[RMDB]
RNA sequence: GGGAACGACUCGAGUAGAGUCGAAAAUAAGUCUAGUUCGCUAGACUUACUAUCGGGAAAACUGCCUCCCGGCUCGAUCAGGCGGAUUCCGUCCAAGCGCUGCAACACACGUAUUCGUACGUGUGAAUAUGAACAUGCAAUUCGUUGCAUGUUCAUAAAAAGAAACAACAACAACAAC
Reactivity to 2A3 in 0.01 (KOAc 150mM, MgCl2 10mM, bicine 150mM(pH8.5), 24C), signal-to-noise 4, nucleotides 027 to 126: u070a010a010g000u000c010u010a000g020u020u040c150g020c100u000a000g000a010c000u000u000a020c020u040a040u140c020g000g010g020a030a060a030a130c050u070g010c000c010u000c000c010c000g030g000c030u030c020g050a080u070c050a040g010g000c010g020g040a090u170u050c030c020g020u020c020c030a050a030g020c060g030c120u080g030c030a130a040c000a020c000a000c010g000u010a020u030u090c220g050u040a020c000g000u000g000u000g000a010a000
Reactivity to DMS in 0.01 (KOAc 150mM, MgCl2 10mM, bicine 150mM(pH8.5), 24C), signal-to-noise 5, nucleotides 027 to 126: u000a010a010g010u000c000u010a000g000u000u010c240g040c000u000a010g000a020c000u000u000a010c060u000a100u000c040g000g010g000a050a060a130a150c090u000g000c040c030u010c020c010c020g020g010c050u000c040g010a070u000c110a090g000g010c010g010g010a170u020u000c040c010g010u010c030c060a110a090g000c070g020c060u010g020c100a120a170c000a000c000a000c000g010u000a020u000u010c160g010u000a000c000g000u000g010u000g010a040a070
Overview: This 177-nucleotide RNA was probed chemically with 2A3 and DMS. High DMS reactivity at an A or C suggests that its Watson-Crick edge is free. Conditions: 150 mM KOAc, 10 mM MgCl2 and 150 mM bicine (pH 8.5), 24 C.